Structure probing data (2A3 and DMS) for a 177-nucleotide construct.
For DMS, 2,896 sequencing reads were counted.
High DMS reactivity at an A or C suggests that its Watson-Crick edge is free.
The data come from the RNA Mapping Database (RMDB), library OK2TRN.
[RMDB]
RNA sequence: GGGAACGACUCGAGUAGAGUCGAAAAGAAACGCGUUUAUACAAGAGUGAUGCAAUGAGUACUUUUGUCAUAUACGACAAUACAAUUGAACGUAAUAGUAUCGCAGGCGUUAGAUAUUUAAGAACUACUACAUGACAUCUUUCGAGAUGUCAUGUAGAAAAGAAACAACAACAACAAC
Reactivity to 2A3 in 0.01 (KOAc 150mM, MgCl2 10mM, bicine 150mM(pH8.5), 24C), signal-to-noise 3, nucleotides 027 to 126: g060a030a030a010c020g030c030g030u010u140u130a200u030a060c060a010a040g070a010g060u030g030a030u040g000c020a030a110u080g020a040g070u080a060c030u020u060u050u030g020u030c070a030u120a030u030a190c100g030a010c060a030a020u080a060c030a030a080u090u110g030a100a010c010g010u060a050a020u030a120g030u000a010u020c050g000c080a040g030g100c010g000u020u020a020g030a080u100a080u110u230u110a090a030g030a070a010c020u080a010
Reactivity to DMS in 0.01 (KOAc 150mM, MgCl2 10mM, bicine 150mM(pH8.5), 24C), signal-to-noise 4, nucleotides 027 to 126: g020a070a050a060c100g010c030g020u010u000u000a080u010a080c090a060a150g000a060g010u010g010a060u010g010c080a130a030u010g010a170g040u010a020c040u000u000u000u000g000u000c160a070u000a050u010a090c130g000a080c070a020a050u010a050c130a050a080u010u000g000a080a060c100g010u000a070a060u010a080g030u000a010u000c050g000c070a120g000g010c050g010u000u000a050g010a070u000a050u000u010u010a070a050g010a070a090c090u010a110